[RMDB]
RNA sequence: GGGAACGACUCGAGUAGAGUCGAAAAAGUGAUAACCACACUGAACAACUUAAUUGAGAUCACUUCAGUUAAUCUACCUUUCCAAAUGAAGCAAUUCGGCCAAGGUAUUGUAACCCAGGUAACCCAACGCGUACAAAUUAUUCGUAAUUUGUACGCGAAAAGAAACAACAACAACAAC
Reactivity to DMS in 0.01 (KOAc 150mM, MgCl2 10mM, bicine 150mM(pH8.5), 24C), signal-to-noise 3, nucleotides 027 to 126: a030g020u010g000a100u010a040a160c070c130a150c050a050c020u000g000a080a080c130a110a090c130u010u000a050a060u000u010g000a070g000a170u010c160a070c120u000u010c060a040g010u000u000a040a040u000c070u000a050c010c030u000u000u000c030c020a020a120a050u000g010a090a070g010c110a030a050u000u000c050g010g000c060c060a020a050g000g010u000a020u000u010g020u010a060a080c040c010c030a110g010g020u010a060a100c030c010c010a110a150
Reactivity to 2A3 in 0.01 (KOAc 150mM, MgCl2 10mM, bicine 150mM(pH8.5), 24C), signal-to-noise 3, nucleotides 027 to 126: a020g050u030g020a090u070a080a010c030c000a040c000a010c010u040g050a080a010c030a040a040c080u080u090a050a040u140u060g030a050g020a080u120c040a010c000u090u010c030a060g000u000u060a050a060u030c020u050a060c000c000u020u060u050c010c010a050a070a130u120g030a070a030g040c030a020a090u080u040c020g010g020c010c020a010a010g050g010u040a050u050u070g040u030a040a030c000c010c020a030g020g050u010a050a080c020c010c000a010a030